[RMDB]
Structure probing data (DMS and 2A3) for a 177-nucleotide construct. 2A3 is a SHAPE reagent: it acylates the 2'-hydroxyl of flexible nucleotides of all four kinds. The reactions ran in a buffer of 150 mM KOAc, 10 mM MgCl2 and 150 mM bicine (pH 8.5), at 24 C. The DMS profile rests on 17,294 reads.
RNA sequence: GGGAACGACUCGAGUAGAGUCGAAAAGCGGAUUAAGGAAAGUUCUACCCUAGUGGUACUUACCCCAUGCAAAGUCUCCGUGCAGGCGGGGUAUGUGCCUCUGGGGCACAACUGGUUGAGAGCUGGGCCUUAUUUACAUGUUCGCAUGUAAAUAAGGAAAAGAAACAACAACAACAAC
Reactivity to DMS in 0.01 (KOAc 150mM, MgCl2 10mM, bicine 150mM(pH8.5), 24C), signal-to-noise 8, nucleotides 027 to 126: g010c040g010g010a130u010u010a070a100g010g010a100a090a030g000u000u000c150u000a110c010c000c000u000a010g020u000g000g010u000a010c010u000u000a010c000c000c010c000a130u000g000c010a030a040a110g000u000c040u010c060c090g010u000g000c010a020g010g020c180g040g000g000g010u000a000u000g000u000g000c000c000u000c010u000g010g000g000g010c040a010c150a020a020c020u000g010g010u000u010g000a080g010a130g010c020u000g010g010g010
Reactivity to 2A3 in 0.01 (KOAc 150mM, MgCl2 10mM, bicine 150mM(pH8.5), 24C), signal-to-noise 2, nucleotides 027 to 126: g060c040g040g080a100u150u190a120a060g110g030a190a050a010g020u060u000c040u060a030c000c000c000u000a000g010u000g010g000u010a000c000u010u000a000c010c000c000c010a020u040g010c000a000a070a160g070u040c050u020c090c070g090u040g030c030a020g130g170c090g020g030g000g000u000a000u010g000u000g000c000c000u000c000u000g000g000g010g000c000a000c000a000a010c020u060g010g070u130u100g060a080g010a010g030c020u030g000g030g020